[RMDB]
Chemical mapping of a 207-nucleotide RNA with 2A3 and DMS. Reactivities are given for positions 27 through 156. The reactions ran in a buffer of 150 mM KOAc, 10 mM MgCl2 and 150 mM bicine (pH 8.5), at 24 C.
RNA sequence: GGGAACGACUCGAGUAGAGUCGAAAAUAAGGAGUGCGAUUGUAUGCCUGAAUACUCAAAAGUCGAAGAUAUGCCGAUUGGCGCAACGAUUACGGGUAUCUGUAUGAGUGAGUCGGUCGACGCCAUCAAGCCGCUGGCGUUCCCGGUUACGCAGGUGGCGAUGUAAUAACUUCGGUUAUUACAUCGCAAAAGAAACAACAACAACAAC
Reactivity to 2A3 in 0.01 (KOAc 150mM, MgCl2 10mM, bicine 150mM(pH8.5), 24C), signal-to-noise 5, nucleotides 027 to 156: u170a020a020g060g000a020g030u070g020c040g080a120u080u060g030u100a060u130g030c000c010u020g040a060a030u070a060c010u030c050a060a080a020a000g090u060c050g020a040a020g020a050u060a030u110g040c020c020g150a170u040u170g040g000c100g000c110a070a050c040g030a020u070u120a040c020g020g000g000u070a040u030c020u050g080u040a090u090g020a020g030u050g000a010g010u010c000g000g010u060c080g010a030c010g000c010c000a020u050c030a080a010g070c020c020g020c090u030g010g000c010g010u010u010c000c000c010g000g010u030u030a050c060g000c030a010g020g020u040g050
Reactivity to DMS in 0.01 (KOAc 150mM, MgCl2 10mM, bicine 150mM(pH8.5), 24C), signal-to-noise 3, nucleotides 027 to 156: u000a090a100g000g020a090g060u000g000c030g000a130u010u000g020u000a070u010g020c010c000u010g000a110a070u000a040c020u040c020a040a090a110a120g030u010c060g010a080a120g000a110u010a040u020g030c020c010g000a160u000u010g040g010c060g020c100a050a100c030g000a150u000u000a130c150g010g000g020u000a030u000c030u000g020u000a090u000g010a250g020u000g020a070g010u000c000g030g000u000c030g010a040c010g030c030c030a050u010c060a120a140g000c070c030g040c150u010g030g010c020g020u000u000c040c000c020g000g020u010u000a050c070g010c020a090g000g050u000g000